RNA sequence: GGGAACGACUCGAGUAGAGUCGAAAAGCUGACUGUAACUGACUCAAUAACAAAUCUAAUCGUGUAUUGCACUGGAAAAGAAAUAUUCUUAUUAUGUAUUUUCUCCAAAUAAUGGCCUACCAUUGCAGGUAAGUGUGCUGUUCGCAGCACACUUACCAAAAGAAACAACAACAACAAC
Reactivity to 2A3 in 0.01 (KOAc 150mM, MgCl2 10mM, bicine 150mM(pH8.5), 24C), signal-to-noise 1, nucleotides 027 to 126: g040c080u040g060a010c040u180g000u010a010a050c030u080g240a000c010u000c060a000a170u200a110a020c000a000a140a120u000c040u130a010a010u050c050g010u130g010u000a040u040u080g020c000a000c040u000g100g000a030a010a010a010g020a000a000a030u080a050u040u010c010u040u130a090u010u000a110u210g010u000a060u000u050u000u030c040u000c000c040a140a000a000u100a090a080u080g010g050c000c000u000a000c020c020a040u100u100g080c110a100
Source: RMDB library RFM100, as collected in RNAgym. Chemical mapping of a 177-nucleotide RNA with 2A3. Conditions: 150 mM KOAc, 10 mM MgCl2 and 150 mM bicine (pH 8.5), 24 C.